[RMDB]
RNA sequence: GGGAACGACUCGAGUAGAGUCGAAAACCUUUGAUGGCGUGUUCCAGGCAGAGGGAAUAAGCAAAUAAAUGGGUCCUGAGACAAGGGGUUACUGUGAUGAGGCGGCGUUGGUUACAUGCCAAACCUUGCUAGGGAUUUUAAUAACAACAUUGAAUCAAAAAUAUGACCUGUUCGCAGGUCAUAUUUUAAAAGAAACAACAACAACAAC
Reactivity to DMS in 0.01 (KOAc 150mM, MgCl2 10mM, bicine 150mM(pH8.5), 24C), signal-to-noise 1, nucleotides 027 to 156: c020c010u000u000u000g010a150u010g000g000c040g030u000g030u000u000c010c000a140g010g020c050a070g040a090g030g010g020a050a050u000a060a090g010c070a070a090a120u010a040a050a090u000g020g040g020u000c000c030u000g010a160g000a090c020a090a110g000g010g000g010u000u000a010c100u010g030u010g000a040u010g000a090g040g010c020g010g040c030g000u020u010g000g010u000u010a060c040a120u000g010c010c040a040a040a110c000c010u000u000g010c040u000a300g010g000g000a090u000u040u000u020a060a120u000a050a050c020a080a030c040a020u010u010g030a100a240u030c070a010